Conditions: 150 mM KOAc, 10 mM MgCl2 and 150 mM bicine (pH 8.5), 24 C. Structure probing data (DMS and 2A3) for a 177-nucleotide construct. For 2A3, 2,950 sequencing reads were counted. 2A3 is a SHAPE reagent: it acylates the 2'-hydroxyl of flexible nucleotides of all four kinds.
RNA sequence: GGGAACGACUCGAGUAGAGUCGAAAAGAUAUGGAACCAGCUACCCACCUAAUGGUUCGCUAUAAUCCCCGCUUUAUCGGAAACGAUAAAGCGGGGGUAGCGAUCAUUAGAGGCUGGUUCCUAAGUCCGAUUAGAUGAUCUUCGGAUCAUCUAAUCGAAAAGAAACAACAACAACAAC
Reactivity to DMS in 0.01 (KOAc 150mM, MgCl2 10mM, bicine 150mM(pH8.5), 24C), signal-to-noise 2, nucleotides 027 to 126: g010a180u000a140u000g000g000a040a050c000c000a050g020c010u010a200c000c020c020a300c070c000u000a020a000u020g000g010u010u000c010g020c000u000a090u000a300a120u010c010c000c010c010g000c000u000u000u000a000u000c000g010g000a120a060a260c010g030a060u000a000a000a000g000c000g000g010g040g010g010u000a000g000c010g000a020u010c000a020u000u000a000g000a040g010g000c000u000g020g010u000u000c000c000u000a030a080g000u010c090
Reactivity to 2A3 in 0.01 (KOAc 150mM, MgCl2 10mM, bicine 150mM(pH8.5), 24C), signal-to-noise 2, nucleotides 027 to 126: g090a050u300a200u300g010g000a000a000c010c000a050g000c000u200a300c050c020c000a000c010c020u000a000a010u000g080g130u260u300c020g020c020u070a060u080a260a300u200c000c000c020c000g020c030u000u000u000a020u010c020g000g070a110a060a110c040g020a010u020a000a010a010g000c040g000g000g020g000g010u000a000g000c000g030a020u000c000a000u000u000a020g010a020g010g000c000u020g000g000u000u000c000c000u010a010a020g020u060c080